[RMDB]
RNA sequence: GGGAACGACUCGAGUAGAGUCGAAAAGGUCGGCAAGAUCCUCAACGGCACCUGGCCUUCCUUGCUGGGCGCCCCCGGUGCGCUGGCGACCAGCAUGCUGGCCUUCGUCUCGAGCUUUGGCGGCGGGGCUAUUCAUAACUUUCGAGUUAUGAAUAGCAAAAGAAACAACAACAACAAC
Reactivity to 2A3 in 0.01 (KOAc 150mM, MgCl2 10mM, bicine 150mM(pH8.5), 24C), signal-to-noise 7, nucleotides 027 to 126: g030g000u020c010g020g060c040a030a040g020a170u110c010c030u040c040a060a070c050g020g000c020a040c050c060u050g040g000c010c000u030u030c020c040u020u040g000c000u010g010g010g000c010g000c000c000c000c010c040g140g120u120g030c100g010c080u050g010g000c000g020a020c000c000a000g010c000a010u040g010c010u010g010g000c000c000u040u050c030g040u000c010u010c040g030a040g000c010u090u110u100g040g050c020g010g010c030g020g020g040
Reactivity to DMS in 0.01 (KOAc 150mM, MgCl2 10mM, bicine 150mM(pH8.5), 24C), signal-to-noise 9, nucleotides 027 to 126: g010g020u000c020g010g020c040a080a090g000a090u010c070c020u010c110a080a150c210g010g010c060a080c130c060u000g010g010c020c040u000u000c060c060u000u010g000c010u000g000g000g010c020g000c010c000c070c050c060g000g010u000g010c060g020c070u000g000g020c030g010a020c010c000a020g000c020a050u000g010c060u000g000g010c010c020u000u010c130g010u000c010u000c150g010a110g010c070u000u000u000g010g000c030g010g010c020g000g000g000